[RMDB]
The record gives the reactivity of an RNA of 207 nucleotides to 2A3 and DMS. The RNA was probed in 150 mM KOAc, 10 mM MgCl2 and 150 mM bicine (pH 8.5) at 24 C. Reactivities are given for positions 27 through 156. The DMS profile rests on 3,779 reads.
RNA sequence: GGGAACGACUCGAGUAGAGUCGAAAAACUCGGUUCGCCGAGUAAAAAAGAUAUGGAGCGUGACGAAUGGUAUGAACUACGUCGUCGGAUCGGAAACGAUCCGAUGACGCAUACCACUAUCACGCUCCUAAGUCAAAAAGUUAGAUUCGUCUAACAAUCAGAAUUAUACUUUCGAGUAUAAUUCUGAAAAAGAAACAACAACAACAAC
Reactivity to 2A3 in 0.01 (KOAc 150mM, MgCl2 10mM, bicine 150mM(pH8.5), 24C), signal-to-noise 3, nucleotides 027 to 156: a000c000u000c000g000g040u070u050c200g040c070c030g010a020g010u050a000a020a000a020a010a000g020a010u030a010u060g000g000a000g000c030g010u000g000a020c090g130a300a300u020g000g000u010a000u010g010a060a060c090u180a090c300g000u000c000g010u000c000g000g000a000u000c000g000g020a020a030a020c000g000a000u010c000c000g000a000u000g000a000c000g000c000a000u000a000c000c000a010c000u000a000u010c000a000c000g000c000u000c000c000u000a000a000g000u000c000a020a130a140a210a000g030u020u040a010g010a060u080u260c240g040u010c090u050a000a010c030a030a090
Reactivity to DMS in 0.01 (KOAc 150mM, MgCl2 10mM, bicine 150mM(pH8.5), 24C), signal-to-noise 2, nucleotides 027 to 156: a080c010u010c000g020g010u010u010c300g020c010c000g010a080g050u000a000a000a080a090a020a090g000a080u000a300u000g000g010a020g050c000g030u000g000a030c040g000a040a040u000g020g000u000a010u000g030a140a280c000u000a120c000g000u000c000g030u000c000g010g000a010u000c000g030g010a200a090a280c010g010a010u000c000c010g030a000u000g000a000c000g010c010a000u000a030c010c010a020c030u000a050u000c000a000c010g010c010u000c000c000u010a000a010g010u010c010a080a070a130a090a190g000u000u000a010g000a080u000u000c240g020u000c000u000a000a020c020a160a230